[RMDB]
Structure probing data (2A3 and DMS) for a 177-nucleotide construct.
For DMS, 47,122 sequencing reads were counted.
The reactions ran in a buffer of 150 mM KOAc, 10 mM MgCl2 and 150 mM bicine (pH 8.5), at 24 C.
RNA sequence: GGGAACGACUCGAGUAGAGUCGAAAACUUCGUGAAAAUGCGUCGAUGGAUCAGGUCUAUCGGGAUCCAACCGAAAUAUCGUUACUAGGAGAGGAAUAAAUCAAGAUAGGCAGGCUAUCAUAGAAAGAAGCGGUAUGUUAUUCGUAGCAUGCCGCUUAAAAGAAACAACAACAACAAC
Reactivity to 2A3 in 0.01 (KOAc 150mM, MgCl2 10mM, bicine 150mM(pH8.5), 24C), signal-to-noise 1, nucleotides 027 to 126: c000u050u040c030g070u040g130a110a000a000a070u160g000c020g030u000c010g010a030u020g020g040a080u040c030a040g000g050u010c010u010a020u030c000g010g000g010a020u030c000c000a000a010c020c030g030a020a010a000u180a030u040c040g040u040u040a020c020u010a000g030g020a020g010a010g020g010a020a050u050a010a080a000u050c040a010a000g000a030u010a000g010g000c000a000g010g000c000u010a010u010c000a030u000a030g070a000a060a000g070
Reactivity to DMS in 0.01 (KOAc 150mM, MgCl2 10mM, bicine 150mM(pH8.5), 24C), signal-to-noise 9, nucleotides 027 to 126: c040u010u010c050g010u030g010a070a060a080a070u010g010c090g020u000c050g010a070u010g000g000a050u010c030a070g000g000u000c040u010a040u010c000g000g000g000a000u000c010c030a140a220c040c010g000a040a140a120u010a040u020c120g010u020u010a040c060u000a180g000g000a050g000a240g000g000a090a060u020a060a080a060u010c050a040a030g000a020u000a030g000g010c000a060g000g000c030u000a030u010c030a070u030a080g000a060a060a070g000